[RMDB]
An RNA of 177 nucleotides, treated with 2A3 and DMS and read out base by base. For 2A3, 11,153 sequencing reads were counted.
RNA sequence: GGGAACGACUCGAGUAGAGUCGAAAAGCGUCCGGCAUAGUCUCGGCGGAGUACGCCGAGCACGUCGGGCAGGCGGAUCUUCCAAUCGAAGGUAACGGGCGUGUCCAUGCGUGCGAUCCGUUGCGAAAGUAUAUAAUGCCUUCGGGCAUUAUAUACUAAAAGAAACAACAACAACAAC
Reactivity to 2A3 in 0.01 (KOAc 150mM, MgCl2 10mM, bicine 150mM(pH8.5), 24C), signal-to-noise 6, nucleotides 027 to 126: g040c020g000u000c010c000g000g020c020a080u100a130g100u060c010u000c000g000g000c010g030g000a120g190u220a040c010g000c000c000g000a000g010c000a000c010g000u000c000g010g020g000c010a020g170g000c020g030g040a060u020c030u060u000c030c000a040a130u110c090g100a110a040g170g010u030a010a020c010g000g030g000c010g020u040g090u030c040c020a100u290g040c100g060u030g000c000g020a150u050c010c000g000u000u010g000c000g040a180a080
Reactivity to DMS in 0.01 (KOAc 150mM, MgCl2 10mM, bicine 150mM(pH8.5), 24C), signal-to-noise 6, nucleotides 027 to 126: g000c050g010u000c000c000g000g010c010a250u000a130g010u000c010u000c010g010g010c010g010g010a220g010u010a140c000g020c000c000g000a030g020c030a040c140g020u000c030g010g000g000c020a040g010g030c030g000g010a140u010c140u000u000c010c050a120a140u010c130g010a080a100g010g000u000a030a040c020g000g000g010c010g020u000g000u010c030c070a100u000g020c090g030u000g000c020g010a070u000c000c000g010u000u000g010c020g000a090a090